[RMDB]
RNA sequence: GGGAACGACUCGAGUAGAGUCGAAAAAUCACACGAGACGUACGCUAGGAGAGACAUGCGCUGUGAUCUGUGUGCUAGAGUACUCGUACGCGAUCGAUCCAUGCCAUGGAUCGGAUCUCUAGAGCUACAUAGCCCGUCUCUUCGGAGACGGGCUAUGAAAAGAAACAACAACAACAAC
Reactivity to DMS in 0.01 (KOAc 150mM, MgCl2 10mM, bicine 150mM(pH8.5), 24C), signal-to-noise 2, nucleotides 027 to 126: a080u010c040a040c020a110c070g000a090g020a080c060g000u000a030c060g020c100u000a200g010g030a100g040a110g010a040c060a100u010g020c100g030c130u000g010u000g000a060u000c050u010g000u000g020u000g000c000u000a030g010a060g020u000a100c110u000c020g000u000a100c140g050c080g000a030u000c010g010a020u000c000c030a060u000g040c190c210a180u010g000g000a020u000c000g020g010a010u000c020u010c010u020a040g000a060g000c150u000a110
Reactivity to 2A3 in 0.01 (KOAc 150mM, MgCl2 10mM, bicine 150mM(pH8.5), 24C), signal-to-noise 1, nucleotides 027 to 126: a010u070c010a030c020a000c050g080a000g000a040c040g030u050a020c050g000c070u130a110g040g090a100g070a000g090a030c000a050u120g060c060g000c160u070g060u050g060a130u020c080u040g090u000g040u030g020c000u050a060g020a030g110u050a090c010u000c040g000u060a060c190g000c010g080a030u020c030g000a010u040c000c000a050u200g260c060c030a150u040g010g030a010u010c040g080g040a050u010c000u060c030u050a080g010a030g030c010u030a050
Source: RMDB library OK2TRN, as collected in RNAgym. An RNA of 177 nucleotides, treated with DMS and 2A3 and read out base by base. For 2A3, 984 sequencing reads were counted. The DMS profile rests on 1,237 reads.